[RMDB]
RNA sequence: GGGAACGACUCGAGUAGAGUCGAAAAGAUAUGGAACGGAAGAAGCUUGGACCGUACGGUUUCGGAAACGAAAUUACGCUAGCUUCCCGUUCCUAAGUCAGAGCAUACCCCGUUCGCGGGGUAUGAACCAACAAACGAGGUUCGCCUCGUUUGUUGGAAAAGAAACAACAACAACAAC
Reactivity to 2A3 in 0.01 (KOAc 150mM, MgCl2 10mM, bicine 150mM(pH8.5), 24C), signal-to-noise 2, nucleotides 027 to 126: g010a000u010a010u060g000g000a000a000c020g030g050a150a300g020a040a000g300c150u300u300g110g020a010c000c000g000u010a030c140g070g000u000u010u020c000g000g040a000a000a000c010g050a010a020a000u050u010a010c010g000c050u030a010g000c010u000u010c010c000c000g000u000u000c000c000u000a010a000g000u010c010a000g050a030g270c000a010u010a020c000c010c010c010g060u000u110c300g000c000g110g030g000g000u010a000u000g000a030a030
Reactivity to DMS in 0.01 (KOAc 150mM, MgCl2 10mM, bicine 150mM(pH8.5), 24C), signal-to-noise 2, nucleotides 027 to 126: g000a010u000a030u000g020g010a010a000c010g000g000a150a120g000a020a030g020c000u020u010g040g010a010c300c020g000u000a010c300g020g010u000u000u000c000g000g000a000a010a020c000g030a020a030a010u000u000a000c000g000c010u010a010g010c010u000u010c060c010c000g000u000u000c000c000u000a000a040g010u000c010a180g010a170g000c010a000u000a000c000c000c000c020g010u000u020c230g010c000g030g000g000g020u010a000u000g000a060a200
Chemical mapping of a 177-nucleotide RNA with 2A3 and DMS. The data come from the RNA Mapping Database (RMDB), library TTRDES. The reactions ran in a buffer of 150 mM KOAc, 10 mM MgCl2 and 150 mM bicine (pH 8.5), at 24 C.